[RMDB]
RNA sequence: GGGAACGACUCGAGUAGAGUCGAAAAGCCCGUAAGUUAGAACGUAUGGCUGAUCAGGCUAUGACUUCUAUGUAUAAGCAAGCACGUGCUGAAGACAAGAAAGCAAAAAUUGUCAGUGCUAUGCAAAUGACCUCCGACUUCGGUCGGAGGAAAAGAAACAACAACAACAAC
Reactivity to DMS in 0.01 (KOAc 150mM, MgCl2 10mM, bicine 150mM(pH8.5), 24C), signal-to-noise 4, nucleotides 027 to 129: g010c000c000c130g000u090a030a090g010u030u000a010g030a080a030c250g010u000a020u000g000g040c020u040g010a080u050c300a190g000g040c030u020a040u000g000a000c040u000u010c000u020a020u030g030u060a020u050a160a110g000c000a000a020g030c040a000c060g000u040g050c130u070g070a300a180g020a060c060a040a000g000a100a190a070g080c190a110a020a080a130a100u030u000g000u010c000a100g000u030g000c020u010a010u000g000c000a020a070a030u170g120a140
Reactivity to 2A3 in 0.01 (KOAc 150mM, MgCl2 10mM, bicine 150mM(pH8.5), 24C), signal-to-noise 3, nucleotides 027 to 129: g010c000c000c010g010u070a030a000g010u000u090a050g000a020a040c090g020u020a020u000g020g010c000u000g040a300u270c080a060g000g080c010u000a020u070g100a010c010u000u000c000u000a050u040g200u000a100u030a170a190g020c000a000a000g000c020a010c010g060u090g000c040u060g040a110a000g000a000c000a000a020g050a140a130a000g120c020a000a040a000a100a130u000u010g000u010c000a020g010u000g000c010u110a140u050g000c030a000a100a040u060g060a020